[RMDB]
RNA sequence: GGGAACGACUCGAGUAGAGUCGAAAAGUGCAAAUGAUGCGUUACAUGUACAAGCUGGAGAGGAUGGCGACUGACGUCUGAAAUUGGAAUGGAUGUAAAAGGCAUAAAGCAUUGUACCGAUGCGAAACGUUAUAUGUCUCUUCGGAGACAUAUAACGAAAAGAAACAACAACAACAAC
Reactivity to DMS in 0.01 (KOAc 150mM, MgCl2 10mM, bicine 150mM(pH8.5), 24C), signal-to-noise 7, nucleotides 027 to 126: g020u000g010c050a060a070a080u030g010a070u020g020c030g030u010u010a060c050a060u010g010u020a080c130a060a080g010c020u010g000g000a060g020a160g000g010a050u010g010g020c050g000a120c090u020g000a080c070g020u010c030u010g000a040a050a100u010u010g000g000a060a060u010g000g000a040u010g000u000a030a040a070a070g010g000c040a040u020a040a080a110g010c010a020u010u010g000u020a130c080c050g010a060u020g010c040g000a060a080a170
Reactivity to 2A3 in 0.01 (KOAc 150mM, MgCl2 10mM, bicine 150mM(pH8.5), 24C), signal-to-noise 9, nucleotides 027 to 126: g090u080g010c020a020a080a160u180g070a070u050g030c010g040u060u080a060c030a040u110g050u100a040c010a060a060g020c040u070g050g030a060g020a020g100g030a070u050g040g010c020g020a060c050u060g050a030c020g010u000c030u040g080a130a120a120u070u060g020g040a050a050u100g030g040a000u010g000u080a020a040a030a100g080g000c020a030u090a060a100a010g000c010a010u020u070g050u060a060c050c070g010a030u070g030c040g070a050a080a010

Chemical mapping of a 177-nucleotide RNA with DMS and 2A3. The RNA was probed in 150 mM KOAc, 10 mM MgCl2 and 150 mM bicine (pH 8.5) at 24 C. DMS adducts were read by reverse transcription with MarathonRT. Values cover nucleotides 27 to 126.